[RMDB]
RNA sequence: GGGAACGACUCGAGUAGAGUCGAAAAUGGGAGCAGAAUAGGGAUGAAGGGACCUGGCAGCAGAAGACUCCCAAGUUGGAGCUGUUGGGUGGAGCCAUGUACUACCUGGAAGCAGAGCAUCAUGGGACCAUCCAACAACAUUCGUGUUGUUGGAUGGAAAAGAAACAACAACAACAAC
Reactivity to DMS in 0.01 (KOAc 150mM, MgCl2 10mM, bicine 150mM(pH8.5), 24C), signal-to-noise 3, nucleotides 027 to 126: u010g000g010g010a110g020c080a070g010a070a050u010a080g000g030g000a080u000g000a120a130g010g000g000a100c020c030u000g000g010c020a010g010c010a100g010a190a090g010a080c040u000c080c080c130a090a090g020u010u000g000g000a300g010c020u000g030u010u010g000g010g010u000g000g000a090g000c020c020a070u000g010u000a010c080u000a070c140c020u000g000g000a120a040g010c050a050g000a070g010c070a050u000c050a040u000g000g010g020a190
Reactivity to 2A3 in 0.01 (KOAc 150mM, MgCl2 10mM, bicine 150mM(pH8.5), 24C), signal-to-noise 1, nucleotides 027 to 126: u090g010g000g000a030g080c020a010g040a210a120u110a100g020g010g050a080u120g070a060a100g040g000g050a020c030c010u000g060g000c020a000g000c020a010g000a250a000g020a000c020u040c060c000c000a010a010g000u020u050g020g020a020g000c010u000g020u050u020g020g000g030u010g020g000a010g040c000c000a010u060g030u050a030c040u030a020c000c030u010g000g010a050a000g000c060a020g030a030g030c040a040u070c010a000u020g020g000g050a030
Chemical mapping of a 177-nucleotide RNA with DMS and 2A3. Conditions: 150 mM KOAc, 10 mM MgCl2 and 150 mM bicine (pH 8.5), 24 C. High DMS reactivity at an A or C suggests that its Watson-Crick edge is free. It was measured as part of the RMDB library OK2TRN. For 2A3 the reverse transcriptase was SuperScript II with manganese.